The record gives the reactivity of an RNA of 177 nucleotides to DMS and 2A3. It was measured as part of the RMDB library OK1LIB. The RNA was probed in 150 mM KOAc, 10 mM MgCl2 and 150 mM bicine (pH 8.5) at 24 C. Reactivities are given for positions 27 through 126. For 2A3, 2,207 sequencing reads were counted. 2A3 adducts were read by reverse transcription with SuperScript II with manganese. High 2A3 reactivity points to a flexible backbone, as in loops and unpaired stretches.
[RMDB]
RNA sequence: GGGAACGACUCGAGUAGAGUCGAAAAGGUGGCUAGAACCCACCAGGGAGGGGAGGACCCAACUAGGCACCGAUUUAGCAUGUUCGUCCUUUCCCCGGGGGCCGAUUUAUUUUGGACGUUCAUGCGAGGGAUCGUGUUCCUUCGGGAAUACGAUCCCAAAAGAAACAACAACAACAAC
Reactivity to DMS in 0.01 (KOAc 150mM, MgCl2 10mM, bicine 150mM(pH8.5), 24C), signal-to-noise 2, nucleotides 027 to 126: g000g000u000g000g020c000u010a010g000a210a160c120c010c000a030c110c150a120g000g000g000a120g000g020g010g000a120g000g040a160c020c040c000a140a230c050u000a010g000g040c020a050c000c000g010a070u020u030u020a070g000c000a020u000g010u000u000c000g000u000c000c000u000u000u000c000c000c010c070g020g000g000g030g030c060c060g000a160u010u020u000a060u020u000u010u010g000g000a040c000g010u000u000c000a000u000g010c000g010a170
Reactivity to 2A3 in 0.01 (KOAc 150mM, MgCl2 10mM, bicine 150mM(pH8.5), 24C), signal-to-noise 2, nucleotides 027 to 126: g000g000u010g030g010c000u010a010g020a010a000c000c000c000a010c010c010a020g000g000g040a070g020g010g020g010a070g060g010a030c000c010c000a030a030c010u010a000g010g040c010a020c000c000g000a030u030u050u130a020g000c000a000u010g000u000u000c000g000u000c000c030u010u020u030c000c000c000c000g010g020g010g020g000c030c000g000a020u010u070u030a200u020u130u150u070g000g000a000c000g000u000u000c000a000u000g000c000g000a020